This 207-nucleotide RNA was probed chemically with DMS and 2A3.
Values cover nucleotides 27 to 156.
DMS adducts were read by reverse transcription with MarathonRT.
The reactions ran in a buffer of 150 mM KOAc, 10 mM MgCl2 and 150 mM bicine (pH 8.5), at 24 C.
In probing experiments dimethyl sulfate is read out at A N1 and C N3, which are open when not base-paired.
Source: RMDB library OK3TST, as collected in RNAgym.
[RMDB]
RNA sequence: GGGAACGACUCGAGUAGAGUCGAAAAUUAUUUUCAACAUCCACAACCAUUUCUAAGGUGAUAGCUUCUCUGGUUACUUAUCACUGGUAUGACCAAACAUCUUGAUUUGCCUAAGAUGGCUCUGGUUUAUGCCUAUUGUUCAAGACCAACCUGGCCAGAAUCACUGACUAUUCGUAGUCAGUGAUUCAAAAGAAACAACAACAACAAC
Reactivity to DMS in 0.01 (KOAc 150mM, MgCl2 10mM, bicine 150mM(pH8.5), 24C), signal-to-noise 1, nucleotides 027 to 156: u010u000a070u000u000u000u020c040a050a100c060a080u010c030c090a040c060a050a080c030c020a090u010u000u000c020u000a150a130g000g040u000g010a080u000a080g000c060u010u000c050u000c050u000g030g000u000u020a060c070u000u020a060u000c040a080c060u000g020g000u010a030u000g010a050c020c000a060a040a050c020a030u000c000u000u010g010a140u000u000u000g030c170c070u010a020a050g020a030u000g020g030c120u010c100u000g000g010u010u000u000a020u000g030c000c030u000a130u000u010g050u000u010c020a070a070g010a040c010c000a060a090c130c050u000g020g050c000c000a180
Reactivity to 2A3 in 0.01 (KOAc 150mM, MgCl2 10mM, bicine 150mM(pH8.5), 24C), signal-to-noise 6, nucleotides 027 to 156: u080u020a100u040u190u080u130c060a070a050c020a080u050c020c020a070c060a110a080c040c030a120u080u170u160c090u120a160a090g020g000u040g040a080u070a060g040c050u090u070c040u020c020u060g060g010u060u060a080c010u060u070a040u100c020a030c090u020g030g000u020a010u040g010a010c000c010a060a120a040c010a000u020c000u040u020g080a130u150u120u300g100c030c050u080a010a020g010a040u010g040g000c030u010c050u040g010g010u020u030u100a010u010g000c000c010u050a100u040u090g000u020u040c070a070a010g030a080c040c000a030a050c020c020u040g040g040c020c020a020